This 207-nucleotide RNA was probed chemically with 2A3 and DMS. For DMS, 3,595 sequencing reads were counted. The reactions ran in a buffer of 150 mM KOAc, 10 mM MgCl2 and 150 mM bicine (pH 8.5), at 24 C. Values cover nucleotides 27 to 156. For 2A3 the reverse transcriptase was SuperScript II with manganese. For DMS the reverse transcriptase was MarathonRT.
RNA sequence: GGGAACGACUCGAGUAGAGUCGAAAACUGUGUUCGCACAGGUUUAAGGGGUCUGUUUGGCCACAUAGAACUACGACGAAGAACAACUGAAGCCUCCACGGUUGGGAGUCGCUAUGUGGAACAGACGGAGGCACCCAUUAUUGCUCUUCGGAGCAAAUCGUAUCGUUUUAUUCGUAAAACGAUACGAAAAAGAAACAACAACAACAAC
Reactivity to 2A3 in 0.01 (KOAc 150mM, MgCl2 10mM, bicine 150mM(pH8.5), 24C), signal-to-noise 7, nucleotides 027 to 156: c010u020g010u010g040u100u090c190g070c080a010c010a030g050g050u060u120u100a090a060g020g010g010g000u020c020u040g100u060u150u160g190g010c000c000a000c000a000u010a000g060a160a100c130u230a070c220g010a000c010g150a300a030g000a030a010c010a000a000c000u020g050a150a020g050c010c010u000c020c000a020c000g020g000u000u000g010g000g010a020g000u000c000g000c040u000a010u010g000u010g020g000a050a020c000a010g040a010c030g020g000a010g000g020c020a060c010c020c000a030u180u230a160u110u060g000c010u000c000u010u060c210g100g000a000g000c000a010a010a010
Reactivity to DMS in 0.01 (KOAc 150mM, MgCl2 10mM, bicine 150mM(pH8.5), 24C), signal-to-noise 2, nucleotides 027 to 156: c010u000g050u000g010u000u010c300g040c020a010c010a070g030g000u000u000u010a110a170g040g000g040g030u010c010u000g040u000u000u000g020g030c000c010a010c020a040u000a050g000a180a200c050u000a260c030g000a060c000g000a190a190g040a180a190c000a040a020c020u000g010a030a130g030c040c000u000c000c020a300c060g070g020u000u000g010g030g000a110g040u000c020g000c000u030a040u000g030u000g020g010a050a070c020a060g000a060c040g010g020a070g040g040c030a120c030c000c010a300u000u000a090u010u000g040c000u000c020u000u000c300g020g040a060g000c050a020a010a080

The 2A3 profile rests on 6,935 reads.